[RMDB]
Notes: The data come from the RNA Mapping Database (RMDB), library OK3TST. Chemical mapping of a 207-nucleotide RNA with 2A3. Values are in units of 0.01, from 0 to 300, in steps of 10. The RNA was probed in 150 mM KOAc, 10 mM MgCl2 and 150 mM bicine (pH 8.5) at 24 C. For 2A3 the reverse transcriptase was SuperScript II with manganese. High 2A3 reactivity points to a flexible backbone, as in loops and unpaired stretches. For 2A3, 784 sequencing reads were counted.
RNA sequence: GGGAACGACUCGAGUAGAGUCGAAAAGGAUACAACUUGCAUGCCUCCUACAUACGUUGGCGCAAUGAAAUUGUACUGACACCAACUUAUUCUCCGCUUGCAGAUAGCCCAACCGUUGCCUGUAAGCUUAAAGCCACGCCCAUAAUCUCCUCCAAGGCAAGCAGUUAGCUUUCGAGCUAACUGCUUGAAAAGAAACAACAACAACAAC
Reactivity to 2A3 in 0.01 (KOAc 150mM, MgCl2 10mM, bicine 150mM(pH8.5), 24C), signal-to-noise 2, nucleotides 027 to 156: g040g020a030u060a120c050a050a030c090u070u050g000c030a050u100g000c010c000u050c020c010u100a060c060a150u270a050c080g040u040u020g010g010c000g010c040a010a040u100g070a070a000a100u090u020g000u030a100c030u020g040a020c000a030c030c040a070a010c040u080u180a090u160u040c000u030c030c050g000c000u010u040g010c030a010g030a100u080a010g070c070c000c000a010a120c040c030g090u050u050g000c010c010u080g000u030a020a080g000c010u050u110a040a110a000g020c010c000a010c040g000c000c000c000a040u070a100a050u100c050u000c030c000u100c030c000a000a050g050g060
Values cover nucleotides 27 to 156.